Structure probing data (2A3) for a 207-nucleotide construct.

[RMDB]
RNA sequence: GGGAACGACUCGAGUAGAGUCGAAAACGUGGAAGUCCUGCUCGGGGCGGAAGCAUUAAAACCAUUCGAGCUAGUCAAUGCGUGGCGUGUCUCUCCGCAGCGUGUUGGCGAAUGUAAAGAGUGACUAUUGACCACGCAACGUUCGCGUUGCGUGGAAGGAACGAGUAGACUUCGGUCUACUCGUUCCAAAAGAAACAACAACAACAAC
Reactivity to 2A3 in 0.01 (KOAc 150mM, MgCl2 10mM, bicine 150mM(pH8.5), 24C), signal-to-noise 1, nucleotides 027 to 156: c100g010u060g040g030a020a040g010u040c030c030u030g010c000u000c000g000g000g020g000c020g000g020a000a010g060c020a050u090u280a050a080a040a110c100c040a030u150u280c040g010a000g020c000u000a000g010u000c000a000a030u000g000c010g020u030g180g010c000g000u000g010u010c000u000c000u000c010c000g000c020a040g000c000g000u020g050u010u000g000g000c000g000a000a000u100g070u080a000a000a020g000a000g000u000g010a010c010u040a110u030u300g030a030c000c000a000c000g000c000a000a000c000g040u080u120c210g040c010g060u000u000g010c000g010u000g000g000a000a030